[RMDB]
The data come from the RNA Mapping Database (RMDB), library OK2TST. Chemical mapping of a 177-nucleotide RNA with DMS and 2A3. 2A3 adducts were read by reverse transcription with SuperScript II with manganese. The reactions ran in a buffer of 150 mM KOAc, 10 mM MgCl2 and 150 mM bicine (pH 8.5), at 24 C. For DMS, 3,568 sequencing reads were counted.

RNA sequence: GGGAACGACUCGAGUAGAGUCGAAAACACAAUGCAUGACUGAUGGUCAGUUGCACUUUGUUACCAGUACCCUAACCGAAACCACGGGUAUCAAAGGGACGCAGCGCAACAUUUUUGGCAUCACUAAAGAUCCUAUCAUGUUCGCAUGAUAGGAUCUAAAAGAAACAACAACAACAAC
Reactivity to DMS in 0.01 (KOAc 150mM, MgCl2 10mM, bicine 150mM(pH8.5), 24C), signal-to-noise 5, nucleotides 027 to 126: c050a110c180a100a080u010g000c080a090u010g010a070c130u000g010a090u010g010g020u010c040a050g010u000u000g000c000a030c020u000u000u010g000u000u000a040c000c010a160g010u000a040c010c010c000u000a160a120c130c110g020a110a140a120c200c080a120c300g020g000g000u000a020u010c030a040a080a110g000g000g010a030c030g010c200a030g020c030g020c030a020a020c020a090u010u000u000u010u010g010g010c010a040u010c050a080c150u010a050a110
Reactivity to 2A3 in 0.01 (KOAc 150mM, MgCl2 10mM, bicine 150mM(pH8.5), 24C), signal-to-noise 5, nucleotides 027 to 126: c050a010c040a040a110u150g050c040a060u110g040a130c040u080g050a020u100g080g080u100c030a030g010u030u020g020c010a010c030u030u010u090g000u020u020a070c010c010a020g020u010a010c000c010c000u030a070a080c080c070g250a210a040a030c090c050a050c080g000g040g000u020a020u220c060a060a060a040g000g010g000a000c010g000c040a010g000c010g000c000a000a030c020a060u110u070u040u110u070g040g020c010a010u030c010a030c090u130a170a120